Description
An RNA of 177 nucleotides, treated with 2A3 and DMS and read out base by base. For 2A3 the reverse transcriptase was SuperScript II with manganese. For DMS the reverse transcriptase was MarathonRT. The RNA was probed in 150 mM KOAc, 10 mM MgCl2 and 150 mM bicine (pH 8.5) at 24 C.
RNA sequence: GGGAACGACUCGAGUAGAGUCGAAAACUUGGCACGUUCGCGUGCCAAGAAAGAACGCCAAAGUGACGCAAUCUUGCGCGUCAAAAAGGCGAAACGAGGUAAAAAGCGGCCCGUUCGCGGGCCGCAAUCAAUAGAUGUUGUUCGCAACAUCUAUUGAAAAAGAAACAACAACAACAAC
Reactivity to 2A3 in 0.01 (KOAc 150mM, MgCl2 10mM, bicine 150mM(pH8.5), 24C), signal-to-noise 1, nucleotides 027 to 126: c000u010u010g000g000c020a010c000g020u050u050c220g010c010g100u010g000c000c000a000a000g000a010a000a010g010a040a030c010g000c010c000a000a050a030g120u030g000a000c010g000c000a030a110u100c130u140u270g040c060g010c030g050u010c000a000a000a010a000a000g010g000c040g000a020a020a000c040g050a070g020g180u100a080a100a040a070a000g000c000g040g020c040c030c020g030u080u030c180g000c000g050g000g030c000c000g000c000a030a010
Reactivity to DMS in 0.01 (KOAc 150mM, MgCl2 10mM, bicine 150mM(pH8.5), 24C), signal-to-noise 3, nucleotides 027 to 126: c000u000u000g000g020c010a000c000g000u000u010c180g010c010g020u010g010c000c000a020a000g000a050a090a100g020a090a160c020g010c000c010a040a270a120g000u000g010a010c000g020c000a080a140u020c200u020u010g020c250g000c000g000u000c000a010a030a010a060a300g000g010c000g000a020a050a070c110g000a100g020g000u010a090a070a080a170a070g000c020g020g010c040c010c010g030u000u010c230g000c010g010g010g030c000c000g010c020a010a010